[RMDB]
RNA sequence: GGGAACGACUCGAGUAGAGUCGAAAAGAAUGUAAGAGCGUAAUCGCGCCUUGACGUGAGUGAGACAAGACAGAACGCUAUCCAAAGUAAGAUAGCAUAGCUCACGAUACGCUGAUCUGUCAUAGAAACGAUAGCCAGGGUUCGCCCUGGCUAUCGUAAAAGAAACAACAACAACAAC
Reactivity to 2A3 in 0.01 (KOAc 150mM, MgCl2 10mM, bicine 150mM(pH8.5), 24C), signal-to-noise 1, nucleotides 027 to 126: g050a000a050u250g010u300a100a000g020a100g030c070g000u070a120a080u190c120g000c000g010c000c000u000u200g000a000c000g070u000g000a000g000u000g000a000g050a030c020a140a060g000a000c050a040g020a070a070c130g000c000u000a000u030c000c000a080a080a080g040u070a110a110g080a000u000a000g000c000a000u000a000g000c000u000c020a000c000g000a000u070a170c040g060c040u040g060a000u000c000u000g000u000c000a090u030a000g090a000a140
Reactivity to DMS in 0.01 (KOAc 150mM, MgCl2 10mM, bicine 150mM(pH8.5), 24C), signal-to-noise 1, nucleotides 027 to 126: g060a140a080u010g040u000a010a080g000a000g030c000g000u010a130a130u000c060g000c080g000c220c210u000u140g000a130c000g000u000g080a000g030u000g000a140g000a280c110a010a100g000a000c000a000g090a000a060c300g000c030u000a000u000c010c100a190a100a190g070u170a100a130g000a000u000a000g000c080a130u000a260g000c000u000c000a000c000g040a170u000a000c000g060c000u000g000a220u000c010u000g000u000c000a130u130a170g000a020a120
Structure probing data (2A3 and DMS) for a 177-nucleotide construct. For DMS the reverse transcriptase was MarathonRT. As a SHAPE reagent, 2A3 marks flexible, mostly unpaired nucleotides at the ribose 2'-OH.